The record gives the reactivity of an RNA of 207 nucleotides to 2A3.

RNA sequence: GGGAACGACUCGAGUAGAGUCGAAAAGAAAUUACGUUUCCUUUACACUUCUCAAACCGGGACCAAGAGAAGCAAAGCAUCCCUCAUAUCCACGAUGGAGGGUGUCGUGGAGUAUACUGUACCAAAAAGAGCGAACACGGCUUCGGCCGUGUUCGAACUCCAAGAAUGGGUUCGCCCAUUCUUGGAGAAAAGAAACAACAACAACAAC
Reactivity to 2A3 in 0.01 (KOAc 150mM, MgCl2 10mM, bicine 150mM(pH8.5), 24C), signal-to-noise 1, nucleotides 027 to 156: g050a000a040a010u210u120a040c040g010u050u020u000c010c010u000u140u010a050c030a000c000u060u060c010u000c020a080a140a140c040c040g060g050g040a060c050c050a110a020g000a010g010a000a000g000c060a060a050a050g040c000a010u110c000c060c010u090c060a060u150a070u070c000c000a020c050g000a020u040g080g070a040g070g000g000u010g040u030c010g000u000g000g010a000g000u010a010u010a030c110u060g060u100a060c000c060a030a090a070a000a000g080a010g040c030g000a000a000c000a000c000g000g000c000u050u130c130g040g000c020c020g000u010g010u000u010c000g000a000a010

Reactivities are given for positions 27 through 156.